[RMDB]
RNA sequence: GGGAACGACUCGAGUAGAGUCGAAAAGUGGCGCUGGAUAAAUAUGUUCAGCGCCUGACCGCGAAACGCAACGGCGGACAGGGCGUUUCCACACUGGCGUGGUGUCAUGGCGACACGCUGCUGACAGGUCUGCUUAAGGUUUCGACCUUAAGCAGACAAAAGAAACAACAACAACAAC
Reactivity to 2A3 in 0.01 (KOAc 150mM, MgCl2 10mM, bicine 150mM(pH8.5), 24C), signal-to-noise 3, nucleotides 027 to 126: g130u060g010g000c010g000c020u000g030g020a010u020a150a300a050u300a250u300g040u000u000c000a000g010c000g000c000c000u010g000a000c020c040g000c010g000a070a090a010c080g000c070a080a070c090g060g000c000g040g030a030c030a070g000g040g010c010g010u000u020u040c010c020a050c010a030c060u060g070g000c010g020u060g070g030u030g050u010c050a060u210g200g000c040g020a010c000a010c120g000c010u050g000c020u040g030a050c010a080g000
Reactivity to DMS in 0.01 (KOAc 150mM, MgCl2 10mM, bicine 150mM(pH8.5), 24C), signal-to-noise 2, nucleotides 027 to 126: g000u000g000g020c020g030c000u020g000g010a000u000a050a160a200u000a090u000g000u000u000c000a000g000c010g020c000c000u000g010a090c050c010g000c080g010a050a050a080c100g010c060a080a130c080g000g030c030g060g000a150c040a140g000g000g000c000g000u000u000u000c000c000a130c130a060c120u010g000g000c030g060u010g020g000u020g020u000c080a080u010g010g040c150g000a110c010a050c000g000c020u010g020c090u000g000a110c190a050g000

The record gives the reactivity of an RNA of 177 nucleotides to 2A3 and DMS. For DMS, 1,326 sequencing reads were counted. For 2A3, 2,411 sequencing reads were counted. For DMS the reverse transcriptase was MarathonRT. 2A3 adducts were read by reverse transcription with SuperScript II with manganese. In probing experiments dimethyl sulfate is read out at A N1 and C N3, which are open when not base-paired. Source: RMDB library OK2TST, as collected in RNAgym.